[RMDB]
RNA sequence: GGGAACGACUCGAGUAGAGUCGAAAAUGUUAUGGCGUGCCUAUUGAAGCAUGAGCCGGCGACUUAGACCUGACGUGCGAGCUUAAGUUGAAAAACGGAGGCGGAGCGAAAGCGAGUCCGAAUAGGGCGGCAUUAGUACGUCGGGCUAGACUCGAAAGGAGAUAAAUACGUUCGCGUAUUUAUCUCCAAAAGAAACAACAACAACAAC
Reactivity to DMS in 0.01 (KOAc 150mM, MgCl2 10mM, bicine 150mM(pH8.5), 24C), signal-to-noise 1, nucleotides 027 to 156: u030g010u000u000a080u010g000g060c020g010u000g000c020c010u000a120u020u000g030a130a040g010c040a040u000g000a140g040c010c010g070g000c000g030a130c010u000u000a080g000a020c000c000u000g000a040c030g050u010g010c000g000a120g020c000u000u000a150a210g000u000u010g010a110a070a150a070a060c090g000g000a220g000g010c020g000g000a110g020c010g000a100a080a170g000c030g000a050g040u010c000c000g010a120a150u000a190g000g000g040c000g000g000c090a130u000u000a100g030u000a030c030g000u000c000g010g020g000c020u000a040g000a110c030u010c000g010a060a120a300
Reactivity to 2A3 in 0.01 (KOAc 150mM, MgCl2 10mM, bicine 150mM(pH8.5), 24C), signal-to-noise 2, nucleotides 027 to 156: u120g030u060u040a100u200g000g000c020g010u010g010c010c030u150a270u160u230g100a150a030g000c020a010u030g050a000g070c000c030g020g020c040g030a040c020u060u060a020g030a300c000c000u000g010a000c000g030u010g000c000g020a120g010c030u060u030a040a000g010u010u020g080a000a120a000a000a000c010g000g000a010g020g000c000g000g040a010g010c000g030a010a010a000g000c000g020a080g010u000c000c010g050a130a120u170a200g020g000g000c000g010g010c050a100u160u050a020g010u000a000c000g000u000c000g010g000g010c000u000a010g010a040c010u000c060g030a080a140a000
Chemical mapping of a 207-nucleotide RNA with DMS and 2A3. The data come from the RNA Mapping Database (RMDB), library PDB130. The RNA was probed in 150 mM KOAc, 10 mM MgCl2 and 150 mM bicine (pH 8.5) at 24 C. Reactivities are given for positions 27 through 156. For DMS the reverse transcriptase was MarathonRT.